[RMDB]
RNA sequence: GGGAACGACUCGAGUAGAGUCGAAAAGAAAAAGAGGAGCGGGCCUCCCGAUCCGAGGGGCCCGGUGGCCUGAUCUGGAGGGCACUCCGGGCCGUAAGGAAGAAAAGCACCCAGAGGGAGGAAGCCACUAACAAGAUGAGUUCGCUCAUCUUGUUAGAAAAGAAACAACAACAACAAC
Reactivity to DMS in 0.01 (KOAc 150mM, MgCl2 10mM, bicine 150mM(pH8.5), 24C), signal-to-noise 1, nucleotides 027 to 126: g040a080a070a040a140a130g000a160g020g030a110g000c090g020g030g010c040c010u000c000c000c010g010a180u000c020c040g010a300g010g000g010g020c000c020c030g000g010u000g000g000c000c010u000g010a160u010c290u010g010g000a240g070g010g000c010a060c020u000c000c020g020g000g000c040c000g000u000a010a300g000g030a000a070g000a030a080a040a100g040c020a160c070c010c020a110g000a190g000g000g010a000g020g000a050a110g010c060c040a260
Source: RMDB library 15KREP, as collected in RNAgym. Chemical mapping of a 177-nucleotide RNA with DMS. For DMS, 543 sequencing reads were counted. For DMS the reverse transcriptase was MarathonRT. The RNA was probed in 150 mM KOAc, 10 mM MgCl2 and 150 mM bicine (pH 8.5) at 24 C.